[RMDB]
RNA sequence: GGGAACGACUCGAGUAGAGUCGAAAAGAUAUGGAACGGUACCCAGCGGUAAUACUCGGAAACGAGUGCCAGCUGGUACCCGUUCCUAAGUCAAAUCAUAUCUACGCGUUCGCGCGUAGAUAUGAAAUCCCGAUAAAACGUUCGCGUUUUAUCGGGAAAAAGAAACAACAACAACAAC
Reactivity to DMS in 0.01 (KOAc 150mM, MgCl2 10mM, bicine 150mM(pH8.5), 24C), signal-to-noise 1, nucleotides 027 to 126: g020a010u000a300u000g000g010a010a020c010g000g030u010a270c220c020c040a020g030c010g010g020u010a020a070u010a090c020u000c000g010g010a040a050a120c010g000a020g110u000g000c010c000a080g020c020u000g010g000u000a020c270c000c020g040u010u000c010c000u000a010a100g010u000c040a070a120a120u010c000a010u010a000u000c000u000a000c010g000c000g010u010u010c170g010c010g030c010g000u000a000g010a000u000a000u000g010a010a150a100
Reactivity to 2A3 in 0.01 (KOAc 150mM, MgCl2 10mM, bicine 150mM(pH8.5), 24C), signal-to-noise 1, nucleotides 027 to 126: g030a020u090a060u210g000g020a000a010c000g030g000u020a020c030c030c000a020g020c000g000g000u150a300a170u130a300c010u000c010g000g030a120a010a050c000g040a000g000u030g000c000c000a060g000c000u010g000g000u020a000c010c000c010g020u010u000c000c000u000a060a040g030u040c040a050a110a120u010c000a000u000a010u000c000u010a010c000g040c000g030u030u090c300g000c000g000c010g140u000a010g000a000u000a010u000g000a020a000a000
Record summary
This 177-nucleotide RNA was probed chemically with DMS and 2A3. For 2A3, 2,347 sequencing reads were counted. 2A3 adducts were read by reverse transcription with SuperScript II with manganese. It was measured as part of the RMDB library TTRDEL. Conditions: 150 mM KOAc, 10 mM MgCl2 and 150 mM bicine (pH 8.5), 24 C. For DMS, 1,023 sequencing reads were counted. Reactivities are given for positions 27 through 126. Reactivities are rounded to 0.1 and cut off at 0 and 3.